An RNA of 115 nucleotides, treated with 2A3 and read out base by base. Source: RMDB library P50LIB, as collected in RNAgym. The RNA was probed in 150 mM KOAc, 10 mM MgCl2 and 150 mM bicine (pH 8.5) at 24 C.
RNA sequence: GGGAACGACUCGAGUAGAGUCGAAAAGGCAACUCGUCCCGGCGCUGAGUUCGCCGGGUUAUAAAACAUAACACAUCGGCUCGCUUCGGCGAGCCAAAAGAAACAACAACAACAAC
Reactivity to 2A3 in 0.01 (KOAc 150mM, MgCl2 10mM, bicine 150mM(pH8.5), 24C), signal-to-noise 1, nucleotides 027 to 095: g030g020c040a030a040c040u030c080g070u090c020c010c000g000g060c010g030c040u210g140a020g050u120u060c020g000c000c040g010g020g000u010u030a050u010a010a050a010a000c090a050u120a060a070c130a000c000a140u090c070g000g000c020u000c030g000c090u040u060c030g080g000c000g000a000g090c000c000a050